[RMDB]
RNA sequence: GGGAACGACUCGAGUAGAGUCGAAAAAGACCUCCGAUUCGAGAGCUCCUGGACUCCUCAGCUCUGGAGUCCUCCGACCCGUGAGGUCGAGGAUCCCCGCGCAGGGAGGCAGCCACCAGGAGAAAGCCAACCCCAUUGUUCGCAAUGGGGAAAAGAAACAACAACAACAAC
Reactivity to DMS in 0.01 (KOAc 150mM, MgCl2 10mM, bicine 150mM(pH8.5), 24C), signal-to-noise 9, nucleotides 027 to 129: a060g030a030c040c020u000c020c060g040a150u020u030c090g020a080g000a100g050c000u010c030c010u000g000g000a230c000u000c020c030u000c070a100g000c000u000c000u000g000g000a050g040u020c000c000u030c050c040g010a020c020c000c040g080u060g000a180g020g020u010c000g030a060g020g010a050u000c020c000c010c040g000c280g030c030a150g030g030g020a020g000g010c130a080g020c080c100a070c040c020a000g020g000a060g030a000a040a030g020c050c060a090a220
Reactivity to 2A3 in 0.01 (KOAc 150mM, MgCl2 10mM, bicine 150mM(pH8.5), 24C), signal-to-noise 9, nucleotides 027 to 129: a000g060a030c010c010u030c020c020g080a090u050u120c070g030a030g010a020g130c010u000c000c000u020g040g020a130c010u020c000c000u030c030a020g000c000u010c020u070g000g000a030g030u010c000c000u030c040c080g000a000c000c010c030g230u230g120a230g020g000u000c000g000a000g000g010a050u070c030c020c000c000g010c000g000c010a050g140g090g000a000g020g000c050a000g060c070c040a060c000c000a000g000g000a000g000a010a010a000g030c010c020a040a080

Structure probing data (DMS and 2A3) for a 170-nucleotide construct. DMS adducts were read by reverse transcription with MarathonRT. The reactions ran in a buffer of 150 mM KOAc, 10 mM MgCl2 and 150 mM bicine (pH 8.5), at 24 C. DMS (dimethyl sulfate) methylates the pairing face of unpaired adenines and cytosines.